[RMDB]
RNA sequence: GGGAACGACUCGAGUAGAGUCGAAAAGACAAGUGCUUCGGCACUUGUCAAAUAAGCAAGUAGAAAUGGCCAAACUACAUGCAUCGAUAGAAAGGCCAUAAAAAACUGUCCAGUUCGCUGGACAGAAGUACUAAUUGACGUUCGCGUCAAUUAGUACAAAAGAAACAACAACAACAAC
Reactivity to 2A3 in 0.01 (KOAc 150mM, MgCl2 10mM, bicine 150mM(pH8.5), 24C), signal-to-noise 4, nucleotides 027 to 126: g000a000c000a010a000g000u010g000c030u060u110c190g070g000c010a010c000u000u000g000u010c000a000a000a000u010a010a010g010c010a040a060g000u010a010g040a010a060a020u020g000g020c000c010a050a020a000c000u020a010c010a030u050g020c010a140u180c170g180a130u080a180g200a100a160a030g000g000c010c000a000u020a000a030a010a000a000a000c000u010g000u000c000c000a000g000u020u070c150g060c070u000g000g000a000c000a000g000a010a010
Reactivity to DMS in 0.01 (KOAc 150mM, MgCl2 10mM, bicine 150mM(pH8.5), 24C), signal-to-noise 3, nucleotides 027 to 126: g000a000c000a020a000g020u000g010c000u000u000c220g040g020c010a010c000u000u000g000u010c000a040a060a070u020a080a100g020c050a040a060g030u000a000g000a010a010a010u010g020g000c010c000a230a190a030c000u000a020c010a110u000g020c020a060u000c180g000a110u000a080g000a090a100a150g020g020c000c000a060u010a000a090a050a070a020a020c010u000g000u010c000c000a000g000u000u010c240g010c000u000g000g000a010c000a000g000a020a040